[RMDB]
An RNA of 177 nucleotides, treated with 2A3 and DMS and read out base by base.
The DMS profile rests on 810 reads.

RNA sequence: GGGAACGACUCGAGUAGAGUCGAAAAGCAACUGAGGUAAGAGCAUACCGCCAUCUGUAUUAGCGCUAUUGUCACCCGGAUGAGGCGCGAGGGCAACAGCCAACUGCUCUCCACUGGACGACAUGCCAUGACGAGGAGUGUUCGCACUCCUCGUCAUAAAAGAAACAACAACAACAAC
Reactivity to 2A3 in 0.01 (KOAc 150mM, MgCl2 10mM, bicine 150mM(pH8.5), 24C), signal-to-noise 1, nucleotides 027 to 126: g000c020a000a100c040u050g090a010g070g010u070a060a040g010a000g090c000a030u090a090c010c040g010c010c010a090u030c040u080g120u060a100u090u070a050g010c000g060c050u140a210u210u190g040u030c010a040c030c050c000g060g030a070u080g050a000g090g000c040g000c020g050a030g020g010g010c000a060a030c000a110g130c050c010a020a020c060u040g000c000u000c010u000c040c000a050c050u060g100g050a030c020g000a010c050a020u110g060c020c000
Reactivity to DMS in 0.01 (KOAc 150mM, MgCl2 10mM, bicine 150mM(pH8.5), 24C), signal-to-noise 1, nucleotides 027 to 126: g000c060a030a080c050u010g000a090g010g000u000a070a070g000a110g000c050a070u000a040c110c050g000c000c030a070u010c070u000g000u010a050u000u010a110g030c080g000c010u020a090u010u040g020u010c030a090c020c010c030g030g020a090u000g010a060g000g000c050g000c140g010a080g000g020g010c030a030a040c110a050g020c090c050a110a080c240u010g020c020u000c000u080c040c040a030c020u000g000g000a080c000g000a090c090a020u000g000c050c070